Conditions: 150 mM KOAc, 10 mM MgCl2 and 150 mM bicine (pH 8.5), 24 C. The record gives the reactivity of an RNA of 207 nucleotides to 2A3. For 2A3, 513 sequencing reads were counted.
[RMDB]
RNA sequence: GGGAACGACUCGAGUAGAGUCGAAAAGAUUAAGUGGGAGCGUCGCCCUUUCGGUGCAUCGGAUAUUAAUUAGCCAGUGCGUGGCACUACGCAUAUUGAUGUCUACUUUGGCGUAGACUGUGCCAAUUUAAGGAUUGAUGGGCAAUCCAGCCCUAGAAUGCUAGUAUCACUUCGGUGAUACUAGCAUAAAAGAAACAACAACAACAAC
Reactivity to 2A3 in 0.01 (KOAc 150mM, MgCl2 10mM, bicine 150mM(pH8.5), 24C), signal-to-noise 1, nucleotides 027 to 156: g090a080u160u110a100a000g030u120g000g000g020a030g040c050g150u060c040g040c040c000c060u000u060u070c030g000g000u070g000c050a050u070c050g020g000a000u010a080u070u060a110a110u070u060a090g070c010c000a040g030u000g020c020g060u000g070g010c050a020c040u080a000c000g000c020a010u060a090u120u130g100a090u070g000u010c000u010a010c000u080u110u080g040g030c010g010u000a000g040a120c070u050g020u000g000c020c000a000a000u100u080u010a120a060g060g000a050u000u090g020a020u150g020g000g030c000a000a000u020c000c100a020g000c000c000c000u030a030g040a110